This 177-nucleotide RNA was probed chemically with DMS and 2A3.
The reactions ran in a buffer of 150 mM KOAc, 10 mM MgCl2 and 150 mM bicine (pH 8.5), at 24 C.
As a SHAPE reagent, 2A3 marks flexible, mostly unpaired nucleotides at the ribose 2'-OH.
RNA sequence: GGGAACGACUCGAGUAGAGUCGAAAAGUGACACUGUUCGCAGUGUCACAAAGUGGUGGAUCUAGAACCACAAUAACUAGUUCAAAGAUCUAGUCUAGAUCAAAAGCAUACAGUUCGCUGUAUGCAACCUAGCAAGACUGUUCGCAGUCUUGCUAGGAAAAGAAACAACAACAACAAC
Reactivity to DMS in 0.01 (KOAc 150mM, MgCl2 10mM, bicine 150mM(pH8.5), 24C), signal-to-noise 2, nucleotides 027 to 126: g020u000g000a010c010a000c000u010g000u000u010c210g000c020a050g010u000g030u000c000a010c000a020a100a040g010u000g030g030u000g000g000a010u000c000u000a030g000a080a020c000c000a000c050a110a080u000a100a080c010u000a010g020u010u000c150a220a200a130g000a030u000c030u000a010g000u000c000u000a010g010a010u000c040a020a040a080a120g020c010a010u000a010c000a020g000u000u010c250g030c010u010g010u010a000u000g000c010a060a010
Reactivity to 2A3 in 0.01 (KOAc 150mM, MgCl2 10mM, bicine 150mM(pH8.5), 24C), signal-to-noise 3, nucleotides 027 to 126: g000u000g000a000c000a000c000u010g010u050u090c150g030c070a000g000u000g000u000c000a000c000a000a020a000g030u020g000g000u020g030g010a010u020c000u010a010g020a030a010c010c000a010c050a000a040u100a030a020c030u020a010g030u070u050c100a290a140a070g100a120u010c010u010a000g020u000c010u010a020g000a020u020c030a010a080a010a060g000c010a010u000a000c000a000g020u020u060c100g070c090u000g000u010a000u010g000c010a010a010